RNA sequence: GGGAACGACUCGAGUAGAGUCGAAAACCCGUUGAUCCUACUUUCUUACACAGAUUCUAUUCACUUAAGGCUGCAGUCCAUGGGUGGAAGAUGGUUGUGUGUGAUAAGGUACGUUCUCUCAAAUUGAGUGACAAUCAUAGUUCGCUAUGAUUGUCACAAAAGAAACAACAACAACAAC
Reactivity to 2A3 in 0.01 (KOAc 150mM, MgCl2 10mM, bicine 150mM(pH8.5), 24C), signal-to-noise 1, nucleotides 027 to 126: c000c020c000g000u080u210g120a150u110c030c000u030a040c010u020u030u050c000u000u030a010c010a000c000a030g040a100u050u070c010u050a300u010u040c020a010c010u020u030a070a000g000g060c050u150g160c260a020g020u000c000c000a030u050g010g050g010u030g020g050a000a000g050a040u050g130g040u140u150g140u000g000u010g000u000g020a020u020a050a030g030g010u030a010c010g010u010u010c070u010c020u010c040a040a090a300u080u090g030a060
Reactivity to DMS in 0.01 (KOAc 150mM, MgCl2 10mM, bicine 150mM(pH8.5), 24C), signal-to-noise 2, nucleotides 027 to 126: c000c000c010g020u000u040g010a110u000c150c100u010a060c040u010u000u000c060u010u000a020c010a020c010a080g010a100u000u010c010u000a160u000u000c000a050c030u000u000a100a110g010g010c020u020g010c200a150g010u000c010c000a100u000g000g000g010u010g000g000a010a060g000a020u010g010g010u000u000g020u000g000u000g030u000g010a040u000a030a020g010g060u000a090c060g030u000u000c020u000c030u010c160a080a070a130u010u000g010a250

This 177-nucleotide RNA was probed chemically with 2A3 and DMS. For DMS the reverse transcriptase was MarathonRT. The data come from the RNA Mapping Database (RMDB), library 15KREP. Reactivities are given for positions 27 through 126.